[RMDB]
An RNA of 177 nucleotides, treated with 2A3 and DMS and read out base by base. The reactions ran in a buffer of 150 mM KOAc, 10 mM MgCl2 and 150 mM bicine (pH 8.5), at 24 C. For DMS, 1,196 sequencing reads were counted. The data come from the RNA Mapping Database (RMDB), library OK1LIB.

RNA sequence: GGGAACGACUCGAGUAGAGUCGAAAAGAAGAAAAAGAAACACGCGAACCUGGCAAAGGCCGCAGAGCCAGGAGCGUGAUAAGCGCAGAAAGAUCUGCGGCCAAAAGGCAGAAGAACUGCCAAGAAACAUCAUCGAGCAUUUCGAUGCUCGAUGAUGAAAAGAAACAACAACAACAAC
Reactivity to 2A3 in 0.01 (KOAc 150mM, MgCl2 10mM, bicine 150mM(pH8.5), 24C), signal-to-noise 1, nucleotides 027 to 126: g070a000a000g110a010a080a000a000a000g060a070a140a010c000a000c030g030c000g010a120a110c000c000u030g010g000c000a020a100a160g000g000c030c000g000c000a000g000a000g000c000c000a000g020g000a000g000c010g000u000g000a000u050a060a010g060c010g000c030a000g170a130a080a060g050a130u000c000u000g000c000g000g000c000c000a000a020a000a000g020g000c020a010g000a130a000g030a070a160c000u000g000c000c000a080a000g000a000a080a000
Reactivity to DMS in 0.01 (KOAc 150mM, MgCl2 10mM, bicine 150mM(pH8.5), 24C), signal-to-noise 1, nucleotides 027 to 126: g000a170a190g000a050a070a050a140a040g000a230a000a110c030a000c020g000c010g000a170a090c030c000u000g030g000c070a240a040a190g000g100c050c000g020c070a000g020a010g000c000c020a030g000g000a050g000c000g010u000g030a060u010a080a050g020c140g010c160a190g000a000a000a000g060a060u040c000u000g000c000g000g000c050c020a140a040a150a150g000g000c000a000g020a190a220g000a200a080c000u000g000c050c000a070a110g000a240a090a180